[RMDB]
Structure probing data (DMS and 2A3) for a 207-nucleotide construct.
The 2A3 profile rests on 3,321 reads.
The data come from the RNA Mapping Database (RMDB), library OK3TST.
The reactions ran in a buffer of 150 mM KOAc, 10 mM MgCl2 and 150 mM bicine (pH 8.5), at 24 C.
RNA sequence: GGGAACGACUCGAGUAGAGUCGAAAACUGGAGCAAAAACAUGAGUACAUGUGCACUCUCCCAGAGGUCGAAUGCCUUAAGAGUUGCGCCAUCUCUAAGCAAAUCAAAGAGCUAGGGGAGCAACUAAAGAGAAAGAAUGAUCCAGCUAACCGCCAGACACUAAACAGACUUUCGAGUCUGUUUAGUGAAAAGAAACAACAACAACAAC
Reactivity to DMS in 0.01 (KOAc 150mM, MgCl2 10mM, bicine 150mM(pH8.5), 24C), signal-to-noise 2, nucleotides 027 to 156: c000u000g010g030a030g000c040a040a070a060a060a030c030a050u000g020a190g040u010a120c010a050u000g020u000g000c150a150c040u000c020u010c010c020c050a300g010a040g000g050u010c040g020a220a130u000g020c000c020u000u000a070a140g000a120g010u010u010g030c050g000c010c020a160u000c010u010c030u010a080a160g020c050a100a050a250u020c140a040a110a090g010a130g050c050u000a090g000g000g020g000a060g010c040a010a010c030u010a020a020a140g000a100g000a090a060a030g010a120a170u000g000a070u000c010c000a000g000c040u010a100a060c040c020g000c020c030a080g030a300
Reactivity to 2A3 in 0.01 (KOAc 150mM, MgCl2 10mM, bicine 150mM(pH8.5), 24C), signal-to-noise 5, nucleotides 027 to 156: c000u010g010g000a020g030c040a020a050a070a040a040c030a040u070g020a080g160u200a090c030a030u030g020u040g030c030a020c050u030c010u030c030c020c020a060g020a000g050g030u130c130g170a190a100u180g020c000c000u060u040a100a050g040a000g110u010u020g000c020g050c020c040a140u050c020u010c010u080a090a080g020c030a080a080a130u170c040a120a150a050g060a000g000c020u060a030g000g010g010g030a080g000c000a010a010c000u040a040a100a000g040a000g020a020a080a010g050a070a040u050g000a030u020c010c010a000g000c030u030a040a070c020c030g030c050c040a030g020a070